[RMDB]
RNA sequence: GGGAACGACUCGAGUAGAGUCGAAAAACAGGGUCUGGGCAAGGUCUCUGUCCCUGGUCACCUUGACCAUGUGCUACCUGUCACUGAGUCUAACGGUUGCUCCAAUUCAGCUGAAAGACAGGACUCAUCCCUGGUAACCUUUCGAGGUUACCAGGGAAAAAGAAACAACAACAACAAC
Reactivity to DMS in 0.01 (KOAc 150mM, MgCl2 10mM, bicine 150mM(pH8.5), 24C), signal-to-noise 1, nucleotides 027 to 126: a100c050a010g010g000g000u000c040u000g030g000g060c040a090a030g020g030u000c040u000c000u000g020u000c040c010c010u000g000g000u000c120a070c080c070u000u000g010a000c000c000a120u000g020u000g000c060u010a060c010c010u010g000u000c030a150c120u000g000a110g000u000c020u000a060a190c090g010g010u000u000g000c220u000c010c130a050a110u000u000c080a040g000c110u000g000a170a110a080g000a050c070a140g000g000a120c020u000c060a140
Reactivity to 2A3 in 0.01 (KOAc 150mM, MgCl2 10mM, bicine 150mM(pH8.5), 24C), signal-to-noise 1, nucleotides 027 to 126: a000c010a000g020g040g000u020c030u050g070g130g080c040a060a060g050g000u000c010u060c020u080g110u090c000c000c000u020g080g000u130c040a060c060c000u030u100g010a000c010c000a090u120g020u000g000c060u060a170c000c010u040g050u000c000a010c150u030g020a010g020u020c070u120a070a040c090g050g050u080u090g090c080u160c110c020a050a060u070u010c020a040g050c040u080g000a040a090a000g000a010c010a010g010g010a040c000u010c030a110
Conditions: 150 mM KOAc, 10 mM MgCl2 and 150 mM bicine (pH 8.5), 24 C. An RNA of 177 nucleotides, treated with DMS and 2A3 and read out base by base. It was measured as part of the RMDB library OK2TRN. The DMS profile rests on 926 reads.